This 177-nucleotide RNA was probed chemically with DMS and 2A3.
Conditions: 150 mM KOAc, 10 mM MgCl2 and 150 mM bicine (pH 8.5), 24 C.
High 2A3 reactivity points to a flexible backbone, as in loops and unpaired stretches.
Reactivities are given for positions 27 through 126.
It was measured as part of the RMDB library OK2TRN.
For DMS the reverse transcriptase was MarathonRT.

[RMDB]
RNA sequence: GGGAACGACUCGAGUAGAGUCGAAAACGUGCGUACUGGGCCGCCGGCACAAUGUUCGACCCAGCCGUCUCAGAGGUCGCGGUUCGACCACGAUCAGCCAGCAGGUCAGCGGGGUCCUCCUAGCUAGGAUAAUUAUAGGUUUCGACCUAUAAUUAUCAAAAGAAACAACAACAACAAC
Reactivity to DMS in 0.01 (KOAc 150mM, MgCl2 10mM, bicine 150mM(pH8.5), 24C), signal-to-noise 9, nucleotides 027 to 126: c100g020u000g010c070g020u000a080c060u010g000g000g000c040c050g020c090c040g000g010c040a070c080a080a100u000g010u000u000c090g010a090c020c010c020a110g010c090c060g000u010c050u000c080a120g010a160g010g010u000c020g020c060g010g000u000u010c110g010a070c020c010a050c050g000a050u000c060a120g010c050c030a070g020c070a060g000g000u000c040a050g010c050g010g000g000g000u000c020c040u000c020c030u000a070g020c110u000a100g010
Reactivity to 2A3 in 0.01 (KOAc 150mM, MgCl2 10mM, bicine 150mM(pH8.5), 24C), signal-to-noise 7, nucleotides 027 to 126: c020g040u060g030c040g040u080a110c050u110g000g060g000c030c010g030c030c030g030g010c040a030c020a130a110u150g020u120u100c060g010a070c000c020c010a020g020c030c030g060u040c030u020c070a080g040a060g050g030u030c020g000c030g040g000u060u090c080g050a090c020c020a020c020g030a070u050c010a010g060c030c010a020g010c030a020g030g060u060c020a010g020c020g020g020g000g010u030c000c010u010c000c010u050a060g020c030u080a060g010